Structure probing data (2A3 and DMS) for a 207-nucleotide construct.
The data come from the RNA Mapping Database (RMDB), library OK3TST.
For 2A3, 2,372 sequencing reads were counted.
The DMS profile rests on 5,768 reads.
2A3 adducts were read by reverse transcription with SuperScript II with manganese.
[RMDB]
RNA sequence: GGGAACGACUCGAGUAGAGUCGAAAAUCUCCUGGAAACAAACGACCUUGCAUCCGCUGUCAUUUCCCCAUUAGCCUCUGAUAGCGCGGGCAACGUAACCCUUCUCUUCUCUGAAGGCCUCCACCUCAAGAAUAAGAGGCUAGCAAUUCUUCCAGGAAUUAUCAGUAUCAUUCGUGAUACUGAUAAUAAAAGAAACAACAACAACAAC
Reactivity to 2A3 in 0.01 (KOAc 150mM, MgCl2 10mM, bicine 150mM(pH8.5), 24C), signal-to-noise 4, nucleotides 027 to 156: u050c030u000c000c010u000g000g020a080a060a050c080a080a120a060c110g030a070c010c060u040u140g010c020a090u090c090c070g010c060u030g050u060c020a080u040u080u070c040c010c000c000a100u090u110a020g010c020c000u040c010u030g040a020u070a060g030c030g010c120g040g010g000c020a060a010c060g040u050a010a070c000c010c010u100u030c030u020c020u180u030c050u020c050u120g040a070a000g010g000c010c040u060c030c010a060c000c010u060c030a100a070g030a120a020u070a100a020g000a000g010g010c020u000a000g000c000a020a100u170u040c010u050u010c020c000a000g010g060a010
Reactivity to DMS in 0.01 (KOAc 150mM, MgCl2 10mM, bicine 150mM(pH8.5), 24C), signal-to-noise 3, nucleotides 027 to 156: u010c020u010c010c020u000g000g020a070a080a180c070a050a150a170c030g010a100c020c020u020u010g010c020a100u000c050c030g040c030u010g020u000c030a150u000u010u000c000c000c010c050a220u010u010a060g000c000c000u000c030u000g010a100u000a080g010c090g030c130g030g020g000c040a060a060c040g000u010a080a120c070c010c010u000u010c030u000c030u010u010c090u010c040u010g010a110a090g000g020c040c020u000c080c040a090c040c020u020c040a110a130g000a080a090u000a080a120g010a030g010g010c020u000a040g030c100a080a140u000u010c000u000u000c000c000a050g010g000a080